[RMDB]
The data come from the RNA Mapping Database (RMDB), library TTRINS. This 177-nucleotide RNA was probed chemically with DMS.

RNA sequence: GGGAACGACUCGAGUAGAGUCGAAAAGAUAUGGAUGACAGAACUACGACCCGUACGAGUUAGAAGCCCUGUCGGAAACGACAGGGAACUACUUCUAACUCGUACCGGGUCGCUGUCAUCCUAAGUCCGUAGAGGGUAGGUUCGCCUACCCUCUACGAAAAGAAACAACAACAACAAC
Reactivity to DMS in 0.01 (KOAc 150mM, MgCl2 10mM, bicine 150mM(pH8.5), 24C), signal-to-noise 1, nucleotides 027 to 126: g000a130u010a280u000g000g030a040u010g000a030c000a000g000a200a070c270u000a300c050g000a030c000c000c000g000u000a000c010g000a010g010u000u000a000g000a020a000g020c000c000c000u020g040u000c000g000g010a170a080a300c000g000a030c000a010g000g010g050a000a000c030u030a300c000u010u000c000u000a010a000c000u000c000g050u000a000c000c110g110g000g000u000c000g000c000u000g020u000c010a010u000c010c010u000a000a070g010u010c050

Record summary: DMS adducts were read by reverse transcription with MarathonRT. The reactions ran in a buffer of 150 mM KOAc, 10 mM MgCl2 and 150 mM bicine (pH 8.5), at 24 C.